The record gives the reactivity of an RNA of 177 nucleotides to DMS.
The RNA was probed in 150 mM KOAc, 10 mM MgCl2 and 150 mM bicine (pH 8.5) at 24 C.
For DMS, 891 sequencing reads were counted.
RNA sequence: GGGAACGACUCGAGUAGAGUCGAAAAAAAAAGAUAUGGAGUCUACUACCCACCUCACUUCUACAUGUGGUUCCCUCGGAAACGAGGGAACCGAAUAGAACUGAGAGGUAGACUCCUAAGUCAAAAACAGAAUAUUUAUGUUCGCAUAAAUAUUCUGAAAAGAAACAACAACAACAAC
Reactivity to DMS in 0.01 (KOAc 150mM, MgCl2 10mM, bicine 150mM(pH8.5), 24C), signal-to-noise 1, nucleotides 027 to 126: a020a070a080a090a190g010a150u020a170u010g000g020a000g050u000c020u000a000c000u000a120c030c020c030a300c060c000u000c020a000c140u010u000c020u000a020c300a010u000g020u000g050g030u020u000c000c000c000u000c010g000g000a030a050a110c000g030a000g000g000g000a000a000c000c010g000a050a040u000a020g000a010a000c120u000g040a020g020a110g010g010u000a000g000a000c000u000c000c000u000a000a040g040u020c100a120a060a140a100a090